[RMDB]
RNA sequence: GGGAACGACUCGAGUAGAGUCGAAAAGGGCGAUCCUUCGGGAUCGCCCAAAUAAAGGCAGUCGAGUGCAAGAAGCACAGUCAAUAUCUGACGCCACGACAAAAAGUACAUGGUUCGCCAUGUACAACUACGUAAGACAGUUCGCUGUCUUACGUAGAAAAGAAACAACAACAACAAC
Reactivity to 2A3 in 0.01 (KOAc 150mM, MgCl2 10mM, bicine 150mM(pH8.5), 24C), signal-to-noise 3, nucleotides 027 to 126: g000g000g020c100g000a010u070c140c130u200u220c300g000g020g010a000u020c010g020c000c000c000a000a000a000u000a000a000a000g040g000c040a010g040u020c040g020a020g030u000g030c050a110a150g160a220a030g270c000a000c010a000g020u010c030a000a100u160a190u200c080u090g000a000c000g020c070c000a050c050g060a000c060a030a150a010a000a010g000u000a000c000a000u010g000g040u030u030c100g030c020c010a000u000g000u010a000c000a000a000
Reactivity to DMS in 0.01 (KOAc 150mM, MgCl2 10mM, bicine 150mM(pH8.5), 24C), signal-to-noise 2, nucleotides 027 to 126: g000g020g060c010g000a020u000c000c000u010u020c230g020g020g050a020u010c000g020c000c000c000a000a030a030u010a060a180a080g010g030c020a090g020u000c010g000a130g030u010g010c030a130a070g000a130a140g020c000a020c020a090g020u010c100a050a170u010a110u000c110u000g030a010c020g000c010c000a060c060g000a030c040a050a080a070a080a120g000u000a000c000a000u000g000g010u000u010c260g030c000c000a000u000g000u000a000c000a050a160